[RMDB]
RNA sequence: GGGAACGACUCGAGUAGAGUCGAAAAGUAAUAGAUACAUGGAUGACGAGAAAGGGUGCGCUGAUAUCCGUGACGAAUGCUAGCAGUAAAUAGAAUAGCGCUCCUAAUACAACUAGCAACAAAAGGAUAAGGUAUCGUGAUGUCAAUCACAUUGCGAAUAUUUAGGAGGAUUCGUCCUCCUAAAUAUAAAAGAAACAACAACAACAAC
Reactivity to 2A3 in 0.01 (KOAc 150mM, MgCl2 10mM, bicine 150mM(pH8.5), 24C), signal-to-noise 5, nucleotides 027 to 156: g040u050a020a090u050a130g070a040u110a080c050a040u060g070g000a030u050g030a040c060g020a020g070a100a060a060g020g010g000u030g000c060g020c020u020g040a050u020a020u150c040c020g040u070g040a030c070g070a080a010u060g030c000u020a010g030c070a010g040u100a030a070a100u120a070g080a070a060u050a080g010c010g010c010u010c010c010u060a110a010u060a060c020a060a020c010u050a000g010c010a010a060c010a050a140a020a010g030g000a010u040a060a060g040g020u080a020u110c010g010u010g010a000u020g020u050c060a050a050u110c000a020c000a010u010u040g020c000g060a060
Reactivity to DMS in 0.01 (KOAc 150mM, MgCl2 10mM, bicine 150mM(pH8.5), 24C), signal-to-noise 4, nucleotides 027 to 156: g010u000a100a170u000a070g010a130u010a080c070a110u010g020g030a130u000g020a170c060g000a110g020a100a090a110g010g030g030u000g000c040g010c020u000g020a130u000a050u000c020c000g000u000g000a140c070g000a110a150u000g020c010u000a020g010c040a120g020u000a060a080a130u000a110g010a080a110u000a100g020c040g020c040u000c030c010u000a060a160u000a100c050a080a030c020u000a020g010c010a050a170c050a040a100a070a050g020g000a090u000a050a140g010g010u000a070u000c020g030u000g010a020u010g000u000c030a070a120u010c140a100c020a050u010u000g010c010g000a050